An RNA of 177 nucleotides, treated with 2A3 and DMS and read out base by base.
For DMS, 1,013 sequencing reads were counted.

[RMDB]
RNA sequence: GGGAACGACUCGAGUAGAGUCGAAAAAGUGAAGAUGAUACUUUUAUUAUACACAUGUUUAGGUUUCAUGUGUACUUGCUAUUUUGGUGUCUUCUCUCUUUUGAACCUUAAGCUUAGAGCACCUAUGCCCUUAGUGCUAGUUCGCUAGCACUAAGGGAAAAGAAACAACAACAACAAC
Reactivity to 2A3 in 0.01 (KOAc 150mM, MgCl2 10mM, bicine 150mM(pH8.5), 24C), signal-to-noise 2, nucleotides 027 to 126: a010g030u030g040a110a000g020a030u040g000a010u020a050c010u040u060u060u030a110u100u050a030u020a000c000a000c000a010u010g010u030u100u120a180g100g040u030u120u050c000a010u000g010u000g010u020a050c020u070u110g070c030u030a040u120u140u070u090g070g010u000g000u000c000u020u000c010u000c000u030c000u000u060u000u040g080a060a070c000c000u020u050a110a020g050c010u010u100a050g020a020g080c030a060c020c020u020a060u180g050
Reactivity to DMS in 0.01 (KOAc 150mM, MgCl2 10mM, bicine 150mM(pH8.5), 24C), signal-to-noise 1, nucleotides 027 to 126: a000g010u000g010a200a010g000a060u000g000a010u010a020c010u000u000u000u000a010u000u000a170u010a000c000a020c000a010u000g000u000u000u000a140g030g020u000u000u000c000a000u010g010u000g010u000a000c290u020u000g000c180u000a130u010u000u010u000g010g030u010g000u000c020u000u000c010u000c030u000c020u010u000u000u000g010a160a140c050c020u000u010a060a110g020c050u000u000a030g010a070g030c060a180c110c030u000a060u000g000